Source information
An RNA of 177 nucleotides, treated with 2A3 and DMS and read out base by base. Values cover nucleotides 27 to 126. DMS adducts were read by reverse transcription with MarathonRT.
RNA sequence: GGGAACGACUCGAGUAGAGUCGAAAAUCACGGUUAGAUGUCCGCACAACUCCGGACUCGCGGUGAGCGAUACAGCGCAGCGCGAGCAUCGCAGCUGCUGUGCGGACGGCUAGCAAGGGCUAGCCAAGACCCUCAUAGGUUUCGACCUAUGAGGGUCAAAAGAAACAACAACAACAAC
Reactivity to 2A3 in 0.01 (KOAc 150mM, MgCl2 10mM, bicine 150mM(pH8.5), 24C), signal-to-noise 3, nucleotides 027 to 126: u100c000a040c140g070g040u190u150a060g020a160u150g020u010c010c000g100c020a030c010a060a250c050u030c030c010g000g010a030c040u010c000g000c000g020g210u030g010a020g000c000g070a130u080a300c130a070g010c020g000c000a040g050c000g010c000g000a010g020c050a170u050c030g030c050a030g010c040u290g020c010u000g010u000g000c000g000g000a000c000g010g000c010u020a000g000c060a090a250g150g040g000c000u000a000g000c000c010a000a010
Reactivity to DMS in 0.01 (KOAc 150mM, MgCl2 10mM, bicine 150mM(pH8.5), 24C), signal-to-noise 2, nucleotides 027 to 126: u030c010a090c110g000g030u020u010a000g030a120u060g000u000c000c000g000c040a000c010a060a070c050u010c190c020g000g000a120c000u000c010g000c020g000g000u000g010a100g030c000g050a220u040a170c290a090g000c000g050c010a050g000c000g000c000g030a000g000c160a100u010c000g000c100a140g000c070u000g000c120u000g000u000g000c000g000g000a000c040g010g050c010u000a000g010c010a260a040g000g000g070c000u000a000g000c010c040a100a050
2A3 adducts were read by reverse transcription with SuperScript II with manganese.
Conditions: 150 mM KOAc, 10 mM MgCl2 and 150 mM bicine (pH 8.5), 24 C.